[RMDB]
An RNA of 207 nucleotides, treated with 2A3 and read out base by base.

RNA sequence: GGGAACGACUCGAGUAGAGUCGAAAACGAACAGAGGUCUUAUGCGGAAGACACAGAGAGUCAGGGUAUAUAUACACAUCAAUAGGGAAACAGAAAAGGGAUACGUGAGCGCUUAUCACGAGAACGAGAACAGGUGGUUCCUCAAAAGCGGUGCACACCAGAAGAGCAACUUCGGUUGCUCUUCUGGAAAAGAAACAACAACAACAAC
Reactivity to 2A3 in 0.01 (KOAc 150mM, MgCl2 10mM, bicine 150mM(pH8.5), 24C), signal-to-noise 1, nucleotides 027 to 156: c050g020a010a000c020a020g040a110g110g000u000c020u060u260a100u040g070c040g020g020a090a070g040a030c020a020c040a070g020a000g040a010g180u070c040a050g020g000g000u020a020u000a000u020a000u020a170c010a000c010a120u180c060a010a070u090a140g010g020g040a000a040a060c080a050g130a070a000a030a070g010g010g020a040u040a130c050g000u040g000a020g000c030g000c060u110u080a070u030c010a000c140g130a080g000a180a010c080g040a000g080a040a010c010a000g050g000u010g040g000u040u020c000c000u040c100a100a130a150a000g020c020g000g070u090g010c100a030c000a020

The data come from the RNA Mapping Database (RMDB), library OK3TST. 2A3 adducts were read by reverse transcription with SuperScript II with manganese.